[RMDB]
RNA sequence: GGGAACGACUCGAGUAGAGUCGAAAAGGAUCUGCCGCAGCACAUCCGUGAUUUGAGUGUCCGGGUGGCCCAGCGCCAGGGCGGCCCCGAUCGCGGCGUUGGCCUCGUCGCAAUCCGCGUAUGCCACAAAUAUAUCGUGUUUCGACACGAUAUAUUUAAAAGAAACAACAACAACAAC
Reactivity to DMS in 0.01 (KOAc 150mM, MgCl2 10mM, bicine 150mM(pH8.5), 24C), signal-to-noise 9, nucleotides 027 to 126: g000g010a070u000c060u000g010c110c050g020c060a110g010c040a120c040a030u000c020c020g010u010g000a050u000u010u010g010a140g020u010g010u000c020c030g000g010g030u000g010g010c030c030c060a100g010c040g010c120c030a090g010g010g020c040g010g010c040c030c020c050g000a040u000c070g020c020g010g010c080g000u000u000g010g000c050c080u000c040g010u000c060g010c030a080a050u000c030c050g020c090g010u010a080u000g000c030c040a110c210
Reactivity to 2A3 in 0.01 (KOAc 150mM, MgCl2 10mM, bicine 150mM(pH8.5), 24C), signal-to-noise 7, nucleotides 027 to 126: g050g020a100u020c030u060g030c020c010g030c030a020g020c010a020c000a160u020c010c020g060u150g070a070u050u170u300g290a190g160u190g020u020c020c000g030g010g010u010g050g000c010c010c000a040g040c020g010c020c020a020g030g010g020c020g020g030c020c000c000c010g020a050u060c040g000c010g020g000c020g010u030u040g010g000c000c040u050c020g040u020c010g000c020a010a050u050c040c030g040c030g070u050a080u170g040c010c000a060c040